An RNA of 207 nucleotides, treated with 2A3 and DMS and read out base by base. For DMS, 2,815 sequencing reads were counted. It was measured as part of the RMDB library OK3TST. DMS adducts were read by reverse transcription with MarathonRT.
RNA sequence: GGGAACGACUCGAGUAGAGUCGAAAAUGUGAUACUCGAAAUGCAGUCAUGGCUCACGGCUUGGUCUGGUCUUGAACAGUAUUCACACAGUACUAUGGAAAUACCAUGCAUCAUUUUCAAGUCCAUUUAUGGACACGCCCUAGAAGAGCUGGUGGCAGCACUAGUAUCCAUUCGUGGAUACUAGUGCAAAAGAAACAACAACAACAAC
Reactivity to 2A3 in 0.01 (KOAc 150mM, MgCl2 10mM, bicine 150mM(pH8.5), 24C), signal-to-noise 6, nucleotides 027 to 156: u120g010u020g010a030u040a050c020u030c110g040a080a090a030u110g050c050a020g040u070c030a050u100g030g000c010u040c040a080c060g030g020c020u050u100g100g030u080c040u040g030g000u010c020u010u040g020a040a010c030a030g030u050a040u090u140c030a030c000a010c000a060g080u080a060c020u050a080u090g080g050a060a070a050u120a100c010c010a000u050g020c020a080u050c020a060u140u080u080u060c040a080a030g000u000c010c010a050u080u260u130a180u220g010g000a000c010a000c020g030c020c010c000u110a130g010a190a000g010a060g020c040u040g000g070u030g060g020c060a040
Reactivity to DMS in 0.01 (KOAc 150mM, MgCl2 10mM, bicine 150mM(pH8.5), 24C), signal-to-noise 2, nucleotides 027 to 156: u000g050u000g010a110u000a020c000u000c080g040a090a110a030u000g020c060a050g020u000c010a060u010g010g030c000u000c050a100c120g010g000c010u000u030g030g030u020c040u000g000g020u000c070u000u000g000a130a070c070a050g030u000a300u000u000c030a050c040a050c050a100g040u000a110c060u010a110u000g020g000a040a110a050u000a070c010c020a050u000g010c090a090u020c040a030u010u000u000u000c020a040a090g010u010c010c000a150u000u000u000a070u000g000g010a050c010a030c170g010c000c020c010u000a170g020a140a100g000a110g020c000u000g000g020u000g020g020c090a190